[RMDB]
Background:
Source: RMDB library OK2TST, as collected in RNAgym. An RNA of 177 nucleotides, treated with DMS and 2A3 and read out base by base. Values cover nucleotides 27 to 126.
RNA sequence: GGGAACGACUCGAGUAGAGUCGAAAAUUUAGCUGAGAGUUAGCCAGCUAGGACUCACAUGCAAACUCUGUCUCUUAAAAAACAGUUUAAAAUUCAGGUAAUUUAUUUUUGAACUUGUGCAUGCGUGUAUCUUAUCCCAUUUCGAUGGGAUAAGAUAAAAAGAAACAACAACAACAAC
Reactivity to DMS in 0.01 (KOAc 150mM, MgCl2 10mM, bicine 150mM(pH8.5), 24C), signal-to-noise 4, nucleotides 027 to 126: u000u000u010a020g010c010u000g010a120g010a190g020u000u010a160g000c090c010a020g010c010u000a040g010g000a220c050u010c020a060c030a030u000g000c030a050a170a080c040u010c030u000g010u000c050u000c100u020u010a000a080a080a140a060a030c050a020g010u000u000u000a050a030a040a070u000u000c090a040g000g010u010a060a070u010u010u010a040u000u000u000u020u010g000a030a030c060u000u000g030u000g020c050a030u000g010c080g020u000g020
Reactivity to 2A3 in 0.01 (KOAc 150mM, MgCl2 10mM, bicine 150mM(pH8.5), 24C), signal-to-noise 3, nucleotides 027 to 126: u020u010u020a000g000c000u010g040a030g020a070g300u140u140a030g130c030c010a010g010c020u010a010g040g010a030c000u010c020a020c000a020u010g000c010a000a080a080c010u000c020u050g040u020c010u020c020u130u180a120a040a060a000a010a000c000a000g000u000u040u070a090a080a000a030u090u070c010a010g040g070u050a120a140u080u290u100a150u070u150u040u070u110g020a020a020c010u060u110g020u010g060c020a030u020g010c030g020u050g040